[RMDB]
RNA sequence: GGGAACGACUCGAGUAGAGUCGAAAACCGCUGGUGUUUGCUGCCACCAGCAGGGUGUCAGAGACGUUGAUUUGCUGCGCCGUGGUCGAUUGCAGUGAACCAAACAGGGCGUUAGAGGAGGUGUCCAGGAUCAUUACCACUUCGGUGGUAAUGAUCCAAAAGAAACAACAACAACAAC
Reactivity to DMS in 0.01 (KOAc 150mM, MgCl2 10mM, bicine 150mM(pH8.5), 24C), signal-to-noise 1, nucleotides 027 to 126: c010c020g000c030u000g000g040u010g010u010u000u020g000c050u000g010c240c000a010c010c020a040g000c010a100g030g000g010u000g000u020c060a090g020a100g010a040c060g000u010u000g000a170u020u000u000g000c000u000g000c080g000c010c060g050u010g000g000u000c070g000a040u020u010g040c030a000g020u000g000a060a080c060c040a030a090a130c130a050g020g010g000c050g010u000u010a060g000a120g010g010a070g010g020u000g000u000c000c060a160

About this RNA:
The data come from the RNA Mapping Database (RMDB), library OK2TST. Structure probing data (DMS) for a 177-nucleotide construct. Values cover nucleotides 27 to 126.